[RMDB]
RNA sequence: GGGAACGACUCGAGUAGAGUCGAAAACUGGGAGGGGAGGAUGGAAGCCUAGCUUGGUCACUACCAGUGUGCACAUGUGUGUAGACUAGUCAAGCAUCGUUGAUACAAGCUGCUCUUGGUCACCGGACUAUAGACCAUCCUUCGGGAUGGUCUAUAGAAAAGAAACAACAACAACAAC
Reactivity to DMS in 0.01 (KOAc 150mM, MgCl2 10mM, bicine 150mM(pH8.5), 24C), signal-to-noise 6, nucleotides 027 to 126: c070u010g000g010g000a110g020g000g000g010a070g000g000a110u010g000g010a090a060g010c060c100u000a050g020c010u000u000g010g010u000c040a060c090u010a060c060c030a030g000u010g010u010g000c000a020c010a210u020g010u040g000u000g010u000a030g000a020c010u010a060g010u000c120a070a090g010c140a080u020c130g010u020u010g000a040u010a120c050a030a060g010c050u010g000c050u000c040u000u000g000g000u020c060a110c030c030g010g010a270
Reactivity to 2A3 in 0.01 (KOAc 150mM, MgCl2 10mM, bicine 150mM(pH8.5), 24C), signal-to-noise 8, nucleotides 027 to 126: c040u030g010g010g020a080g000g030g010g010a040g020g010a040u070g020g030a090a010g030c010c040u050a020g000c010u030u020g000g010u040c030a020c060u090a070c020c040a030g000u050g040u020g100c020a020c050a140u250g190u060g000u000g020u140a020g040a070c010u010a010g040u080c090a110a010g040c040a110u080c090g080u050u090g020a030u100a200c020a040a010g010c010u030g010c000u020c030u060u050g030g000u030c010a010c050c020g000g020a000
This 177-nucleotide RNA was probed chemically with DMS and 2A3. The data come from the RNA Mapping Database (RMDB), libraries RFM100 and RFMREP.